[RMDB]
RNA sequence: GGGAACGACUCGAGUAGAGUCGAAAAGUACCAGCAGACAUGCGGAUGAUAACAUGUGAUGUUAUCCCAUGACUUAUAAGAACGUCCUAUGGGAACAGUGGAGCGUGAUUGAGGUCGAGAAACAAGGAGAUGCUACCUUAUUCGUAAGGUAGCAUCUAAAAGAAACAACAACAACAAC
Reactivity to DMS in 0.01 (KOAc 150mM, MgCl2 10mM, bicine 150mM(pH8.5), 24C), signal-to-noise 6, nucleotides 027 to 126: g020u000a120c010c020a120g010c120a050g010a060c100a010u000g010c110g020g010a090u010g010a080u000a050a040c060a060u020g010u050g010a120u000g010u010u010a050u000c000c050c020a030u040g010a030c010u010u030a110u020a060a080g010a120a060c080g000u000c010c080u000a140u030g010g000g050a070a110c050a080g020u000g000g000a050g010c030g010u010g010a100u000u010g000a060g000g000u000c030g010a070g010a060a070a080c100a060a130g000g010
Reactivity to 2A3 in 0.01 (KOAc 150mM, MgCl2 10mM, bicine 150mM(pH8.5), 24C), signal-to-noise 5, nucleotides 027 to 126: g040u060a060c000c020a040g050c040a000g030a060c020a030u090g030c060g060g030a100u100g000a040u080a060a030c010a030u110g100u150g210a140u020g020u040u030a010u040c030c000c000a030u070g010a000c020u070u100a050u020a180a050g070a030a020c030g000u000c000c000u010a010u010g030g000g010a010a040c000a010g000u030g020g010a030g040c040g020u030g020a060u040u070g060a040g040g000u040c050g010a030g060a080a120a010c090a060a040g160g040
The data come from the RNA Mapping Database (RMDB), library OK1LIB. Chemical mapping of a 177-nucleotide RNA with DMS and 2A3. The reactions ran in a buffer of 150 mM KOAc, 10 mM MgCl2 and 150 mM bicine (pH 8.5), at 24 C. 2A3 adducts were read by reverse transcription with SuperScript II with manganese.